[RMDB]
RNA sequence: GGGAACGACUCGAGUAGAGUCGAAAAGGGGUCCAGUCGAGUCCGUAACAAGGCUUGGAUUUAUGGAGCUGAAGCCUCCACGGCUCCAUUGUCAGCCUUGGAUAAGGACUAAGACAGCUGGACGGAGGCACCCAAAAGUUCUCGUUCGCGAGAACAAACUAUAACCAUUCUUCGGAAUGGUUAUAGUAAAAGAAACAACAACAACAAC
Reactivity to 2A3 in 0.01 (KOAc 150mM, MgCl2 10mM, bicine 150mM(pH8.5), 24C), signal-to-noise 3, nucleotides 027 to 156: g070g000g040g010u010c010c010a010g020u060c000g030a020g000u000c000c000g020u020a040a050c010a010a000g010g040c050u200u280g150g010a020u100u250u190a010u030g000g000a000g000c010u030g020a080a010g010c000c000u000c010c000a000c020g010g000c000u000c010c000a000u010u040g000u030c070a030g000c000c000u010u000g000g000a000u030a050a040g000g010a010c000u000a000a000g030a020c000a000g030c040u010g010g010a030c030g000g000a000g000g010c010a050c000c000c000a040a180a000a050g000u000u000c010u000c010g020u060u100c300g000c010g070a000g010a000a000c020a000a060
Reactivity to DMS in 0.01 (KOAc 150mM, MgCl2 10mM, bicine 150mM(pH8.5), 24C), signal-to-noise 2, nucleotides 027 to 156: g020g020g000g020u000c000c010a050g030u000c030g010a120g020u000c000c000g000u010a100a250c030a000a010g010g010c010u010u020g060g040a070u000u010u010a040u000g020g010a000g040c020u010g000a080a140g020c050c010u000c000c000a300c020g010g020c010u000c000c020a030u000u010g000u000c030a120g000c000c000u010u020g010g000a100u000a060a180g020g000a040c020u000a050a100g000a090c300a100g010c020u020g010g020a030c000g020g020a030g090g040c020a110c020c000c010a040a080a110a220g010u020u000c010u000c010g020u010u000c300g030c000g000a020g010a010a000c000a030a100
Notes: Structure probing data (2A3 and DMS) for a 207-nucleotide construct. In probing experiments dimethyl sulfate is read out at A N1 and C N3, which are open when not base-paired. For DMS the reverse transcriptase was MarathonRT. It was measured as part of the RMDB library RNAMAK. For 2A3 the reverse transcriptase was SuperScript II with manganese.